[RMDB]
The record gives the reactivity of an RNA of 207 nucleotides to DMS and 2A3. For 2A3, 2,820 sequencing reads were counted. For DMS the reverse transcriptase was MarathonRT. The DMS profile rests on 1,509 reads.

RNA sequence: GGGAACGACUCGAGUAGAGUCGAAAAUCCUAAGUCUGCGAACUCCCACGAAGAACUGCUUUGUCAGUACGCUCGGAAACGAGCGUACUUGGAUUUAAGCAGGGAGUGGGAGGGAGCAGAUAUGGAAAACUCGAUAGUCCUUCGGGACUAUCGAGAAGAUUAAUUUAAGCUUCGGCUUAAAUUAAUCAAAAGAAACAACAACAACAAC
Reactivity to DMS in 0.01 (KOAc 150mM, MgCl2 10mM, bicine 150mM(pH8.5), 24C), signal-to-noise 1, nucleotides 027 to 156: u000c010c000u000a090a200g000u000c010u000g000c000g010a300a300c000u000c020c010c010a050c030g000a300a070g000a120a170c000u000g000c000u010u000u000g030u000c010a000g000u000a020c000g010c010u000c000g030g000a160a140a300c010g000a010g020c000g010u000a000c000u000u000g000g030a010u020u000u000a010a060g010c030a010g030g000g040a300g040u000g020g020g000a030g010g000g000a300g010c010a010g000a010u000a060u000g000g000a160a010a130a110c020u010c010g000a020u000a000g020u010c000c000u000u000c300g070g020g000a020c000u000a000u000c000g030a000g000a040a040
Reactivity to 2A3 in 0.01 (KOAc 150mM, MgCl2 10mM, bicine 150mM(pH8.5), 24C), signal-to-noise 2, nucleotides 027 to 156: u030c010c000u020a110a030g030u000c010u000g000c000g010a050a020c000u010c010c020c010a000c010g070a170a060g020a070a020c010u010g010c000u010u020u010g020u020c010a000g000u000a000c000g000c000u010c010g000g040a110a080a070c020g000a000g000c000g000u000a000c000u010u050g010g000a010u210u270u260a010a000g010c000a000g000g020g000a020g030u000g000g000g000a000g000g000g000a000g000c000a010g000a000u020a000u010g040g030a010a090a050a080c000u000c000g000a000u000a000g000u000c000c000u040u100c220g030g000g010a000c000u000a000u000c000g000a000g010a000a010